[RMDB]
RNA sequence: GGGAACGACUCGAGUAGAGUCGAAAACGUAAGCCAUAUUUGAAGCUGCUAGCUACUCUAGCUUUGUGUAUAUUGCAGGCAAGUGUACUCGCAUGGUUAGCUCUCUCACCAAACCGCAUUGUAAGUCUAGGCGCUCAAUGCCUUGUGCUCGCAACUGGAGACUAACGAUGUUCGCAUCGUUAGUCUCAAAAGAAACAACAACAACAAC
Reactivity to 2A3 in 0.01 (KOAc 150mM, MgCl2 10mM, bicine 150mM(pH8.5), 24C), signal-to-noise 2, nucleotides 027 to 156: c030g040u070a050a060g050c030c040a090u070a130u100u100u160g100a070a030g010c050u040g030c000u020a020g000c010u030a030c070u040c010u090a040g020c000u070u190u040g030u000g020u020a050u030a010u230u140g030c030a010g030g000c040a100a070g060u060g000u080a070c010u030c050g000c020a050u060g020g020u070u050a030g000c020u000c000u000c030u050c050a050c020c030a080a080a060c040c030g060c000a040u000u090g030u060a060a050g000u000c040u030a030g000g040c020g040c040u040c190a050a110u150g020c000c040u050u040g040u030g030c020u050c020g010c000a010a100c080u070g010

The record gives the reactivity of an RNA of 207 nucleotides to 2A3. Values cover nucleotides 27 to 156. Conditions: 150 mM KOAc, 10 mM MgCl2 and 150 mM bicine (pH 8.5), 24 C. The data come from the RNA Mapping Database (RMDB), library OK3TST. The 2A3 profile rests on 1,323 reads. For 2A3 the reverse transcriptase was SuperScript II with manganese. Values are in units of 0.01, from 0 to 300, in steps of 10.